[RMDB]
RNA sequence: GGGAACGACUCGAGUAGAGUCGAAAAGGGGUCGCAGUGGUUUCACACAAGUACAACAUUUUCUGACAUGCGUAGAUUCUGAAGCCUCCACGGAAUGUGCGCAACAGCAGAAAAUGUUGUACUUGUGUGAAACGUAACAUCUGCGACGGAGGCACCCGUUUUUGUACUAGUUCGCUAGUACAAAAACAAAAGAAACAACAACAACAAC
Reactivity to DMS in 0.01 (KOAc 150mM, MgCl2 10mM, bicine 150mM(pH8.5), 24C), signal-to-noise 1, nucleotides 027 to 156: g020g020g040g030u010c000g020c000a050g030u000g030g010u010u000u000c000a000c000a010c010a000a030g000u000a030c000a000a020c010a030u000u000u000u000c010u000g000a050c050a300u000g000c000g020u000a030g000a030u000u000c000u000g000a030a120g010c030c040u000c020c050a300c030g000g020a020a010u000g010u010g010c000g000c000a010a040c090a170g010c030a020g000a020a000a000a010u000g010u000u000g010u010a000c000u000u010g020u000g010u000g000a010a020a010c030g040u000a040a050c080a090u000c000u000g010c000g020a020c030g000g000a040g030g030c030a180c010c010c040